[RMDB]
RNA sequence: GGGAACGACUCGAGUAGAGUCGAAAAUACACAGCAGUGAGGGCAUGGGUGCUAAGGUCCAUGUCCGAGAGGGAAAGAACCCAGACCAUCAUCUAAGGUCCCUAAAUCUAUGCUAAGUUGAUCAAACAAUCUCUGUCAGAUUCGUCUGACAGAGAUUAAAAGAAACAACAACAACAAC
Reactivity to DMS in 0.01 (KOAc 150mM, MgCl2 10mM, bicine 150mM(pH8.5), 24C), signal-to-noise 4, nucleotides 027 to 126: u030a120c080a100c090a070g000c030a060g030u010g010a130g000g010g010c030a010u000g000g000g000u010g000c170u050a140a120g020g020u010c000c000a020u010g020u000c000c020g000a070g020a140g020g000g000a080a070a110g000a100a130c000c000c030a100g000a140c050c030a040u010c110a050u010c050u010a070a110g010g000u010c020c030c020u000a020a040a030u050c150u060a060u030g000c050u040a090a140g000u000u010g000a080u000c100a030a070a150c220
Reactivity to 2A3 in 0.01 (KOAc 150mM, MgCl2 10mM, bicine 150mM(pH8.5), 24C), signal-to-noise 2, nucleotides 027 to 126: u080a010c050a030c010a110g070c000a000g020u010g140a070g000g000g010c000a020u010g030g000g030u220g040c170u300a060a030g040g000u020c000c000a000u000g000u000c000c000g010a000g000a010g000g030g020a060a090a010g110a040a010c010c010c000a010g000a010c000c000a010u190c000a020u040c040u070a120a160g050g010u110c000c000c000u120a100a140a020u030c030u110a140u200g020c010u040a000a130g010u030u070g010a100u080c000a000a000a140c020

Chemical mapping of a 177-nucleotide RNA with DMS and 2A3. Source: RMDB libraries RFM100 and RFMREP, as collected in RNAgym. 2A3 adducts were read by reverse transcription with SuperScript II with manganese. The reactions ran in a buffer of 150 mM KOAc, 10 mM MgCl2 and 150 mM bicine (pH 8.5), at 24 C. DMS (dimethyl sulfate) methylates the pairing face of unpaired adenines and cytosines.